[RMDB]
RNA sequence: GGGAACGACUCGAGUAGAGUCGAAAACAACGGGCUUUGUCCAAUGAAACACUUAUCGGACAUCAAGGGUUCAGAUCAGUGUUCACUGGACAAAGAUCGUUAAAACGAUGAACUUCGGUUCAUCGAACUCUAGCCAUAACUUCGGUUAUGGCUAGAGAAAAGAAACAACAACAACAAC
Reactivity to 2A3 in 0.01 (KOAc 150mM, MgCl2 10mM, bicine 150mM(pH8.5), 24C), signal-to-noise 2, nucleotides 027 to 126: c030a000a000c000g000g040g020c020u010u000u000g000u000c000c000a000a000u060g030a090a050a000c000a000c000u000u010a010u010c000g010g010a010c030a070u230c160a190a140g300g020g000u040u010c020a070g010a010u010c020a000g010u010g010u010u000c000a010c020u020g000g020a000c010a000a000a000g000a000u000c000g000u000u030a020a030a000a060c010g000a010u000g000a000a000c000u040u040c230g120g010u010u000c000a000u010c000g000a020a010
Reactivity to DMS in 0.01 (KOAc 150mM, MgCl2 10mM, bicine 150mM(pH8.5), 24C), signal-to-noise 1, nucleotides 027 to 126: c070a050a060c000g000g010g020c000u000u000u000g000u000c010c000a000a010u000g000a060a070a030c000a000c000u000u000a010u010c000g010g000a030c000a070u010c230a160a180g040g020g010u000u000c010a110g010a010u000c060a000g030u000g020u000u000c000a000c010u000g000g000a000c000a000a020a000g000a010u000c010g010u000u000a020a060a080a110c020g010a000u000g000a010a010c000u000u000c190g030g010u010u000c010a000u000c000g000a060a070

An RNA of 177 nucleotides, treated with 2A3 and DMS and read out base by base. The 2A3 profile rests on 4,346 reads. The reactions ran in a buffer of 150 mM KOAc, 10 mM MgCl2 and 150 mM bicine (pH 8.5), at 24 C. 2A3 adducts were read by reverse transcription with SuperScript II with manganese. High 2A3 reactivity points to a flexible backbone, as in loops and unpaired stretches. DMS adducts were read by reverse transcription with MarathonRT.